Structure probing data (2A3 and DMS) for a 177-nucleotide construct. Reactivities are given for positions 27 through 126. The reactions ran in a buffer of 150 mM KOAc, 10 mM MgCl2 and 150 mM bicine (pH 8.5), at 24 C. DMS adducts were read by reverse transcription with MarathonRT.
RNA sequence: GGGAACGACUCGAGUAGAGUCGAAAACGAACUUCAAGUCGUCGCGCACCGGGCGCAACUUCAAGGCGUAUCUCGUCAAGCAGCCGGACGGCAAGAUCGGCUUCGAGUUCGAGAAGAAGGAGCCGAAUGACUCGGUACCAUUCGUGGUACCGAGUCAAAAAGAAACAACAACAACAAC
Reactivity to 2A3 in 0.01 (KOAc 150mM, MgCl2 10mM, bicine 150mM(pH8.5), 24C), signal-to-noise 2, nucleotides 027 to 126: c030g000a020a020c020u080u080c060a050a040g000u000c010g020u050c040g010c020g030c040a040c080c030g050g140g070c020g000c020a100a050c070u300u240c080a110a130g030g000c040g000u050a200u130c130u050c100g000u040c020a070a100g000c050a040g010c000c030g140g000a090c110g080g050c000a030a030g040a090u150c010g000g000c000u000u020c030g050a030g070u050u020c000g050a010g000a070a040g070a040a070g070g010a010g000c050c010g030a060a130
Reactivity to DMS in 0.01 (KOAc 150mM, MgCl2 10mM, bicine 150mM(pH8.5), 24C), signal-to-noise 2, nucleotides 027 to 126: c050g000a030a030c060u010u000c300a000a080g010u000c030g040u000c030g070c300g020c040a110c050c030g000g000g000c020g030c030a120a070c130u010u000c140a040a100g000g010c020g000u010a060u000c060u000c000g000u000c040a070a150g030c090a050g050c030c010g010g010a050c140g000g010c110a030a140g000a040u000c010g000g000c050u000u000c200g000a030g000u020u000c000g000a020g000a080a110g060a080a090g000g010a110g000c090c020g000a070a080